[RMDB]
RNA sequence: GGGAACGACUCGAGUAGAGUCGAAAACGUCGUGAACUAGCGACAAUGCCGUAGAUCUAUCGUUAUCUAACCGAAACAUCGUGACUAGUCGUAGAAUAGAACCAGGAGCGGGCGCUGCCAAACAAAGACGUGGUCUCAGAUUCGUCUGAGGCCACGUAAAAGAAACAACAACAACAAC
Reactivity to DMS in 0.01 (KOAc 150mM, MgCl2 10mM, bicine 150mM(pH8.5), 24C), signal-to-noise 3, nucleotides 027 to 126: c090g010u000c000g070u020g000a110a060c110u010a110g020c040g000a010c000a060a040u050g020c010c030g070u030a010g000a020u000c070u020a120u030c120g000u030u020a070u050c030u010a110a040c110c040g000a120a090a060c160a080u000c020g010u000g020a110c000u000a140g020u000c060g020u010a020g000a080a070u020a150g000a100a080c050c020a040g010g010a050g000c030g000g000g010c020g010c000u000g000c010c040a070a080a070c110a130a090a140g000
Reactivity to 2A3 in 0.01 (KOAc 150mM, MgCl2 10mM, bicine 150mM(pH8.5), 24C), signal-to-noise 2, nucleotides 027 to 126: c000g000u000c010g010u020g110a090a010c040u010a020g000c010g030a000c020a010a020u090g000c010c040g010u020a000g040a080u000c000u000a090u050c050g000u040u030a040u050c040u030a010a050c030c010g010a060a000a040c010a030u010c000g000u040g040a020c010u000a000g000u030c010g020u030a000g030a090a060u050a030g040a040a050c010c000a020g000g000a000g000c000g010g020g000c000g000c010u010g010c000c020a080a080a110c020a020a120a020g090